[RMDB]
RNA sequence: GGGAACGACUCGAGUAGAGUCGAAAACGCGACGUUAACAAGUUCGCCUAUCGCUAUCCGCGCGGCGAGAGCUACGAGGAUCUUGUGGCUCGACUGGAGCCGGUCAUCAUGGAGCUGGAGCGACAGGACCGACAACCCUUUUCGAAGGGUUGUCGGUAAAAGAAACAACAACAACAAC
Reactivity to DMS in 0.01 (KOAc 150mM, MgCl2 10mM, bicine 150mM(pH8.5), 24C), signal-to-noise 1, nucleotides 027 to 126: c160g030c060g000a040c080g030u000u040a100a120c260a130a100g000u000u010c100g060c020c030u000a060u000c020g040c030u000a110u000c040c000g010c030g040c060g000g020c020g000a070g000a000g000c000u000a000c000g000a020g000g010a160u000c060u000u000g000u000g010g010c010u020c000g010a120c190u000g020g000a070g000c010c010g000g000u000c090a160u000c150a100u010g020g000a120g010c040u000g010g000a060g000c040g000a000c060a000g010g000
Reactivity to 2A3 in 0.01 (KOAc 150mM, MgCl2 10mM, bicine 150mM(pH8.5), 24C), signal-to-noise 1, nucleotides 027 to 126: c060g030c060g010a070c100g060u230u190a080a090c070a160a050g040u070u050c000g010c030c000u060a050u060c050g000c020u070a110u210c010c030g040c010g000c000g060g000c030g030a190g000a000g050c000u020a030c000g020a020g290g120a150u140c050u040u050g030u020g000g000c000u030c040g000a050c130u110g000g090a020g000c020c020g040g000u090c060a100u070c000a050u160g130g040a060g000c020u070g010g060a010g000c010g050a030c040a010g070g000
The record gives the reactivity of an RNA of 177 nucleotides to DMS and 2A3. Reactivities are given for positions 27 through 126. Conditions: 150 mM KOAc, 10 mM MgCl2 and 150 mM bicine (pH 8.5), 24 C.